Structure probing data (DMS and 2A3) for a 177-nucleotide construct.
RNA sequence: GGGAACGACUCGAGUAGAGUCGAAAAGAAGUGGGUUCCUACGAGAAAGGCCAAUACCAUGUCGCCUGCUUGAUGAAGAGAGCAAGAGAGAGUAUGACUAUCCUGGCGGAGACUGGGGAAUCCAUGGCUGGGUACCUAAUUUCGAUUAGGUACCCAGAAAAGAAACAACAACAACAAC
Reactivity to DMS in 0.01 (KOAc 150mM, MgCl2 10mM, bicine 150mM(pH8.5), 24C), signal-to-noise 2, nucleotides 027 to 126: g010a140a190g020u000g000g010g000u020u000c010c000u020a090c040g020a090g030a060a150a190g000g000c010c010a060a070u000a120c060c030a030u020g000u020c030g010c020c010u000g000c020u010u000g000a220u000g000a120a090g000a200g000a020g030c000a030a070g010a110g000a050g010a090g030u010a020u010g000a060c090u000a040u000c130c130u000g000g010c080g000g030a100g000a250c050u000g000g000g020g000a030a010u010c010c000a020u010g030g020
Reactivity to 2A3 in 0.01 (KOAc 150mM, MgCl2 10mM, bicine 150mM(pH8.5), 24C), signal-to-noise 2, nucleotides 027 to 126: g080a080a040g030u030g000g000g000u000u030c010c000u030a120c020g110a030g060a200a050a010g060g000c000c000a020a020u090a070c010c030a040u060g020u030c010g020c040c010u000g030c000u040u070g020a150u110g060a210a110g070a010g000a010g040c000a060a020g040a000g010a010g000a000g120u090a070u120g020a010c020u000a050u090c030c020u030g010g030c030g040g050a070g020a050c050u060g000g000g010g000a000a000u030c020c020a000u040g050g010

DMS adducts were read by reverse transcription with MarathonRT. It was measured as part of the RMDB library OK2TST. 2A3 adducts were read by reverse transcription with SuperScript II with manganese.